[RMDB]
RNA sequence: GGGAACGACUCGAGUAGAGUCGAAAAGCCGGGCAAGCCAGUCCCGCGGGGCGAAUUGGUCUCGGAACUUAACCCUAAGUAUACCUUUGGUUCUGAAAAGUCUUGCGCUCCUAUAGUCGUUCGGACCCUACUAUUCACUGUUCGCAGUGAAUAGUAGAAAAGAAACAACAACAACAAC
Reactivity to DMS in 0.01 (KOAc 150mM, MgCl2 10mM, bicine 150mM(pH8.5), 24C), signal-to-noise 3, nucleotides 027 to 126: g020c040c080g000g000g010c210a060a090g010c060c060a170g000u000c000c010c000g010c150g030g000g010g030c030g000a080a110u010u010g020g010u010c020u000c040g000g010a050a030c040u000u010a080a110c050c050c030u000a050a080g030u000a100u000a120c130c020u000u010u000g010g000u000u000c020u010g000a030a050a130a140g000u000c020u000u000g020c030g010c030u000c020c030u010a110u000a050g010u000c030g030u000u000c020g030g010a210c110c070
Reactivity to 2A3 in 0.01 (KOAc 150mM, MgCl2 10mM, bicine 150mM(pH8.5), 24C), signal-to-noise 2, nucleotides 027 to 126: g030c020c030g030g000g010c040a080a030g150c050c040a020g020u060c040c010c000g020c070g020g020g000g020c020g050a070a100u120u070g080g020u020c020u010c030g010g020a050a030c020u040u050a040a040c000c000c030u030a110a000g040u040a050u070a180c000c000u040u060u080g000g000u060u060c020u040g040a120a060a030a070g070u000c030u050u050g010c030g010c000u010c000c010u110a140u080a110g020u010c000g010u020u040c010g010g110a100c030c000
This 177-nucleotide RNA was probed chemically with DMS and 2A3. For DMS the reverse transcriptase was MarathonRT. For 2A3 the reverse transcriptase was SuperScript II with manganese. The DMS profile rests on 2,147 reads. The 2A3 profile rests on 2,284 reads. It was measured as part of the RMDB library RFMREP.